[RMDB]
RNA sequence: GGGAACGACUCGAGUAGAGUCGAAAAAGUUCUAGUCCUCACCUAAGAUCAGACUUACACGGCCCUCAAAGCAAGAGCACUUGGUUGGGCUUUGUGGUGGGGAUCAGUGUCUCAUUUUUAGUCCCAAAUUAAAAACGAGAUUUUGGGCUGUACAUCACUAAAUAUGCAGUUUCGACUGCAUAUUUAGAAAAGAAACAACAACAACAAC
Reactivity to 2A3 in 0.01 (KOAc 150mM, MgCl2 10mM, bicine 150mM(pH8.5), 24C), signal-to-noise 3, nucleotides 027 to 156: a000g040u090u020c010u030a010g010u010c000c000u010c020a010c000c020u120a050a060g020a110u120c110a050g180a230c020u120u080a030c050a010c050g000g020c010c010c000u050c020a060a060a040g020c000a110a060g080a050g120c060a070c140u030u040g030g050u090u030g010g020g000c000u040u050u090g050u020g000g000u000g000g000g000g000a010u020c000a010g020u020g050u030c020u010c040a090u090u130u030u020u250a030g050u110c010c010c000a030a010a030u080u070a020a090a030a060a010c100g030a100g020a150u070u030u030u040g000g000g020c010u010g040u070a070c050a090u030c050a040
Reactivity to DMS in 0.01 (KOAc 150mM, MgCl2 10mM, bicine 150mM(pH8.5), 24C), signal-to-noise 3, nucleotides 027 to 156: a060g010u000u000c030u000a030g000u010c020c000u020c040a060c020c020u030a120a130g040a130u010c080a140g020a120c040u010u000a140c050a110c080g030g000c000c000c010u010c030a080a060a140g010c070a050a110g010a120g030c060a120c100u000u000g020g020u010u010g010g030g020c030u000u000u020g020u000g010g020u000g000g010g040g010a000u000c010a070g000u020g020u000c010u010c010a040u000u000u020u000u000a050g010u000c040c090c080a080a070a090u020u000a020a020a020a020a050c020g010a050g020a130u000u000u000u010g010g020g050c070u000g010u010a050c100a160u010c030a290